Chemical mapping of a 207-nucleotide RNA with DMS and 2A3. For 2A3 the reverse transcriptase was SuperScript II with manganese. 2A3 is a SHAPE reagent: it acylates the 2'-hydroxyl of flexible nucleotides of all four kinds.

[RMDB]
RNA sequence: GGGAACGACUCGAGUAGAGUCGAAAAGGGUGGUGUUCGCACCACCCAAAAAGAUAUGGAAUAUGUCGUCCGCUUCGAAGAACACAGAUCGGAAACGAUCUGUGGGAGAAGGGACGAGCAUAUUCCUAAGUCAAAAACUAGACGUUCGCGUCUAGAAGUUUAGGAUAAAGUUCGCUUUAUCCUAAACAAAAGAAACAACAACAACAAC
Reactivity to DMS in 0.01 (KOAc 150mM, MgCl2 10mM, bicine 150mM(pH8.5), 24C), signal-to-noise 2, nucleotides 027 to 156: g000g020g030u000g020g050u000g000u000u020c300g010c010a040c040c000a000c010c000c000a000a000a030a060a090g000a160u010a300u000g000g010a010a020u000a000u000g000u000c010g050u000c010c000g020c040u010u010c000g040a130a200g000a190a250c000a010c000a000g010a030u010c010g010g010a180a100a250c030g010a000u000c000u000g000u000g010g000g010a180g000a020a040g000g000g010a010c010g000a020g030c010a000u000a010u020u000c010c020u010a010a100g010u010c070a110a090a040a150a200c030u000a000g010a000c020g030u000u000c300g050c040g010u010c000u010a000g030a070a140
Reactivity to 2A3 in 0.01 (KOAc 150mM, MgCl2 10mM, bicine 150mM(pH8.5), 24C), signal-to-noise 5, nucleotides 027 to 156: g000g000g000u020g010g010u030g050u060u150c250g040c090a010c000c010a010c000c000c010a030a000a000a000a000g030a010u060a020u070g000g000a010a000u000a000u000g010u030c010g020u030c010c070g300c230u020u010c030g270a300a030g010a040a000c000a000c000a000g000a000u000c000g000g030a070a060a040c000g000a000u000c000u000g000u010g000g000g000a050g000a010a010g000g000g010a000c000g000a000g020c000a000u000a000u010u010c000c000u000a060a020g000u000c050a010a020a000a100a150c010u020a010g010a010c000g030u060u060c300g050c010g170u030c000u000a000g020a030a020
The 2A3 profile rests on 4,968 reads. Reactivities are given for positions 27 through 156.